[RMDB]
RNA sequence: GGGAACGACUCGAGUAGAGUCGAAAAUCAUCUUUCGAGAUGAAAAAUUCCUAAGUCUAGAGCCGAGGCAAGUUGUCAGCGAAUGGUCGGAAACGACCAAUUCGCUUGGAUUUACUUGCUAUCUCUAGAUAUGGAUUACUACCUUGUUCGCAAGGAAGUCACCUAGGUGUUUCGACACCUAGGUGACAAAAGAAACAACAACAACAAC
Reactivity to 2A3 in 0.01 (KOAc 150mM, MgCl2 10mM, bicine 150mM(pH8.5), 24C), signal-to-noise 1, nucleotides 027 to 156: u030c000a000u030c000u070u140u130c220g110a010g020a050u010g010a200a000a000a000a030u120u030c030c000u060a170a060g050u010c000u000a000g010a010g050c050c290g190a100g050g000c000a000a000g000u010u020g020u030c010a000g000c000g000a010a030u010g000g000u010c020g000g060a050a110a040c030g000a000c000c000a020a090u000u000c020g000c000u020u030g030g000a000u040u130u250a020c010u000u000g000c000u000a000u000c000u030c000u000a000g000a000u000a000u020g010g000a010u020u220a090c050u070a110c000c000u010u060g060u000u040c120g120c040a030a000g110g010a000a020
An RNA of 207 nucleotides, treated with 2A3 and read out base by base. 2A3 adducts were read by reverse transcription with SuperScript II with manganese. The data come from the RNA Mapping Database (RMDB), library RNAMAK. For 2A3, 710 sequencing reads were counted. The RNA was probed in 150 mM KOAc, 10 mM MgCl2 and 150 mM bicine (pH 8.5) at 24 C.